[RMDB]
The data come from the RNA Mapping Database (RMDB), library TTRINS. This 177-nucleotide RNA was probed chemically with DMS. For DMS the reverse transcriptase was MarathonRT. Reactivities are given for positions 27 through 126. The RNA was probed in 150 mM KOAc, 10 mM MgCl2 and 150 mM bicine (pH 8.5) at 24 C. The DMS profile rests on 2,027 reads.
RNA sequence: GGGAACGACUCGAGUAGAGUCGAAAAGAUAUGGAACAGCUCACCACCGCCCGUAUAUACGACUAUUGGUCGGAAACGACCAACGAAUCGUUUAUACGGGCGGUGGUGUGAGGCUGUUCCUAAGUCACAAGAUAUUUGACUUCGGUCAAAUAUCUUGAAAAGAAACAACAACAACAAC
Reactivity to DMS in 0.01 (KOAc 150mM, MgCl2 10mM, bicine 150mM(pH8.5), 24C), signal-to-noise 2, nucleotides 027 to 126: g010a060u010a300u000g010g010a010a000c000a010g010c000u000c010a030c010c000a010c010c010g000c000c000c010g020u000a020u000a020u000a020c000g000a020c090u000a300u000u010g000g010u000c000g030g010a070a130a240c010g010a000c000c000a000a010c120g000a070a150u000c000g010u000u000u000a010u010a010c000g010g000g020c030g010g000u010g010g010u000g000u000g030a060g020g010c000u000g000u000u000c000c010u000a010a090g000u000c040a300